Record summary
Structure probing data (2A3 and DMS) for a 177-nucleotide construct. For 2A3, 3,629 sequencing reads were counted. 2A3 adducts were read by reverse transcription with SuperScript II with manganese. For DMS, 12,011 sequencing reads were counted. The RNA was probed in 150 mM KOAc, 10 mM MgCl2 and 150 mM bicine (pH 8.5) at 24 C.
RNA sequence: GGGAACGACUCGAGUAGAGUCGAAAAGAAUUUUAGAAAAGCAAGGCCAAACAAGCAGCACCCGAAAUGCUGAGGGCUAAUUUGGGGUUUAGGAGCAACCUUUCCUGGAAAAAGUGGAAAGGAAAGAACGAUUAAAUGAUUUCGAUCAUUUAAUCGUAAAAGAAACAACAACAACAAC
Reactivity to 2A3 in 0.01 (KOAc 150mM, MgCl2 10mM, bicine 150mM(pH8.5), 24C), signal-to-noise 4, nucleotides 027 to 126: g050a050a070u120u160u160u190a090g070a010a090a010a020g080c060a080a030g040g000c020c040a130a130a020c060a140a050g010c010a000g000c030a090c010c010c030g030a050a090a020u070g000c030u030g020a080g050g080g010c000u050a090a100u070u060u080g050g000g000g030u020u010u110a050g000g040a040g010c020a020a020c000c000u000u010u020c000c020u020g080g050a120a170a030a000a000g180u140g010g000a000a000a000g000g020a010a030a000g040a020
Reactivity to DMS in 0.01 (KOAc 150mM, MgCl2 10mM, bicine 150mM(pH8.5), 24C), signal-to-noise 6, nucleotides 027 to 126: g020a100a070u020u030u020u060a100g010a070a040a070a070g020c110a090a100g020g000c000c030a080a110a100c140a100a110g010c020a030g000c080a100c000c050c080g010a060a090a100u010g020c020u010g010a110g000g000g000c040u010a060a060u010u000u010g010g000g000g020u000u020u010a070g010g010a070g020c090a110a080c020c010u010u000u000c010c000u000g000g020a090a100a100a080a130g020u020g000g000a030a020a010g010g010a030a050a080g000a070
For DMS the reverse transcriptase was MarathonRT.